[RMDB]
RNA sequence: GGGAACGACUCGAGUAGAGUCGAAAAGAAAGGGACCCCUGCCAGGGGAGCGUCGGUCAGCACCCUAUGCAUAUUUUUUUAUGCCGCUGACACCCCUCGACGCGGCAGGAGGGGUGGUCCCGAAAGAGAUCGGGAUUUAUUUCGAUAAAUCCCGAUCAAAAGAAACAACAACAACAAC
Reactivity to DMS in 0.01 (KOAc 150mM, MgCl2 10mM, bicine 150mM(pH8.5), 24C), signal-to-noise 1, nucleotides 027 to 126: g000a140a150a140g020g000g010a060c000c000c000c000u010g000c000c030a150g030g030g020g000a050g040c020g000u000c040g000g000u000c000a010g040c010a190c130c080c040u150a070u020g010c030a010u000a010u000u000u020u010u000u010u000a010u010g000c010c250g000c000u000g050a050c000a300c070c030c000c020u020c030g000a070c080g000c050g000g000c010a010g010g050a110g040g010g020g000u040g010g020u000c000c000c000g030a010a080a080g000a180